[RMDB]
RNA sequence: GGGAACGACUCGAGUAGAGUCGAAAACAUUUGCGCUUCGGCGCAAAUGAAAAUAAAAUAAGCUAGUAGCUCAUUUCUAGCCUAAAAUGAGAAAUAAAUAAAAAACGACGUGGUUCGCCACGUCGAAGACAUAUAGUGUGUUCGCACACUAUAUGUCAAAAGAAACAACAACAACAAC
Reactivity to DMS in 0.01 (KOAc 150mM, MgCl2 10mM, bicine 150mM(pH8.5), 24C), signal-to-noise 3, nucleotides 027 to 126: c000a010u000u000u000g020c000g030c010u010u010c170g040g020c000g000c010a000a000a000u010g010a040a060a070a100u010a100a060a080a080u020a140a150g000c030u000a020g010u000a060g000c040u000c080a030u000u000u010c010u000a020g010c010c050u000a020a040a070a030u000g000a050g000a150a070a080u010a050a080a090u020a020a070a100a080a090a160c000g010a010c010g020u000g000g020u000u000c170g010c010c000a000c010g010u000c000g000a020a030
Reactivity to 2A3 in 0.01 (KOAc 150mM, MgCl2 10mM, bicine 150mM(pH8.5), 24C), signal-to-noise 4, nucleotides 027 to 126: c000a010u010u010u020g000c020g000c010u050u090c280g120g000c010g000c000a000a000a000u000g000a010a010a000a010u120a010a040a010a070u150a050a020g040c010u010a010g030u060a010g060c010u010c040a020u030u070u020c050u020a110g030c000c010u050a060a050a030a040u070g020a020g080a060a160a040u230a090a090a030u150a050a140a040a020a010a010c000g000a000c000g010u000g000g070u050u090c210g040c070c000a000c010g000u000c000g000a000a010